[RMDB]
RNA sequence: GGGAACGACUCGAGUAGAGUCGAAAAGAAUCACCGUACCUAUUUAGGUUUACGCUCCAAGAUCGGUGGAUAGCAGCCCUAUCAAUAUCUAGGAUAACUGUGCUAUGUUUAGAAGAUUAGGUAGUCUAUUACACAGCCAUGUUCGCAUGGCUGUGAACACAUCGAGGGUAUUCGUACCCUCGAUGUGAAAAGAAACAACAACAACAAC
Reactivity to DMS in 0.01 (KOAc 150mM, MgCl2 10mM, bicine 150mM(pH8.5), 24C), signal-to-noise 1, nucleotides 027 to 156: g010a140a060u000c030a210c030c020g020u010a120c030c000u000a250u000u000u000a010g020g020u010u010u000a040c080g030c040u010c020c030a060a100g000a050u000c050g040g060u010g030g010a110u020a040g020c070a180g020c070c000c010u020a040u000c060a070a130u000a070u000c110u030a040g040g020a040u000a030a080c040u030g030u000g070c040u000a080u000g020u000u000u000a070g010a100a170g020a040u000u000a040g000g020u000a080g000u000c030u000a070u000u010a250c000a030c030a030g040c000c010a030u000g010u000u020c300g060c000a020u010g000g010c000u010g000u000g000a030a150
Reactivity to 2A3 in 0.01 (KOAc 150mM, MgCl2 10mM, bicine 150mM(pH8.5), 24C), signal-to-noise 2, nucleotides 027 to 156: g120a060a010u090c020a020c010c000g030u030a030c030c010u100a170u130u140u260a050g010g030u030u060u050a100c090g030c050u070c100c000a080a060g050a120u090c030g040g050u040g020g010a010u040a080g010c020a010g000c010c000c000u010a000u080c030a110a030u060a060u190c080u030a000g030g070a010u020a120a160c020u030g020u030g030c050u020a020u090g040u060u100u000a090g010a150a020g020a080u150u040a030g120g000u010a030g050u030c050u020a140u110u110a110c000a000c000a000g000c000c000a020u020g030u060u050c140g000c110a000u000g020g000c040u000g000u000g000a000a000